Conditions: 150 mM KOAc, 10 mM MgCl2 and 150 mM bicine (pH 8.5), 24 C. Chemical mapping of a 177-nucleotide RNA with DMS and 2A3. As a SHAPE reagent, 2A3 marks flexible, mostly unpaired nucleotides at the ribose 2'-OH.
RNA sequence: GGGAACGACUCGAGUAGAGUCGAAAAACUGAGAUAUGCACUACAGAUGCUAUUAGUCUGCGAAUUCAUAUGACUUUGAACGUACGAAUAUCACGGCCUGAAGAGCAUAAGCUUUAUUAGCGAACCAUGAAGUUAGUCUAUUCGUAGACUAACUUCAAAAAGAAACAACAACAACAAC
Reactivity to DMS in 0.01 (KOAc 150mM, MgCl2 10mM, bicine 150mM(pH8.5), 24C), signal-to-noise 6, nucleotides 027 to 126: a080c030u000g000a030g000a080u000a030u000g010c010a100c110u010a110c190a090g010a090u000g000c030u000a080u000u000a040g000u000c010u000g010c040g010a030a040u000u000c010a030u000a020u010g000a090c110u000u010u010g010a090a090c040g010u000a010c050g000a020a030u000a120u000c030a030c040g010g000c020c010u000g010a040a080g000a030g000c020a020u000a050a100g010c020u000u000u000a090u010u000a030g010c020g000a070a110c030c050a110
Reactivity to 2A3 in 0.01 (KOAc 150mM, MgCl2 10mM, bicine 150mM(pH8.5), 24C), signal-to-noise 3, nucleotides 027 to 126: a000c010u020g010a000g000a030u040a030u080g000c010a020c020u090a020c030a000g100a040u060g010c010u010a030u070u040a050g010u000c010u010g000c000g050a060a060u000u020c000a000u030a010u080g060a050c010u060u020u120g050a100a000c010g010u010a000c020g010a010a010u090a010u090c020a010c020g000g020c010c000u010g020a020a000g010a010g000c010a010u010a090a010g000c000u020u100u000a100u020u040a030g030c000g030a020a040c000c000a020

Notes:
For 2A3, 5,216 sequencing reads were counted.